Structure probing data (2A3 and DMS) for a 177-nucleotide construct. It was measured as part of the RMDB library OK1LIB. The RNA was probed in 150 mM KOAc, 10 mM MgCl2 and 150 mM bicine (pH 8.5) at 24 C. For DMS, 2,599 sequencing reads were counted. Reactivities are given for positions 27 through 126.
RNA sequence: GGGAACGACUCGAGUAGAGUCGAAAAUUGAAAGAAUUUUAGUUCUCUGUUUGGUGGGAAAUCAAAAGAUUUUUUUUGGACACAUCACAAAUCAGUUAGGACUAUAAAUUGUGAAAAUUUGUGUUCACAAAAUAUUAAUGUUCGCAUUAAUAUUUUGAAAAGAAACAACAACAACAAC
Reactivity to 2A3 in 0.01 (KOAc 150mM, MgCl2 10mM, bicine 150mM(pH8.5), 24C), signal-to-noise 2, nucleotides 027 to 126: u040u040g040a020a060a080g070a040a080u000u020u020u040a000g000u030u010c020u000c000u000g010u020u090u050g080g000u010g000g010g100a070a050a100u050c010a010a010a040a100g090a160u170u080u000u020u020u000u020u210g090g020a050c070a020c010a130u120c000a020c020a080a080a030u120c010a010g040u100u200a040g000g020a000c000u020a010u160a120a070a040u050u070g110u030g160a000a050a050a100u050u100u060g020u000g010u060u020c000a010
Reactivity to DMS in 0.01 (KOAc 150mM, MgCl2 10mM, bicine 150mM(pH8.5), 24C), signal-to-noise 2, nucleotides 027 to 126: u020u040g000a200a240a070g010a020a030u000u000u000u000a030g000u000u000c000u000c020u000g000u010u000u000g000g020u000g000g010g000a070a130a050u060c000a010a010a030a040g000a000u010u000u000u070u020u010u020u000g000g020a040c130a070c040a120u010c020a030c000a000a030a060u010c020a000g010u030u040a010g000g000a020c010u000a000u020a020a010a030u020u000g000u000g000a140a120a040a020u000u000u000g000u010g000u000u010c000a080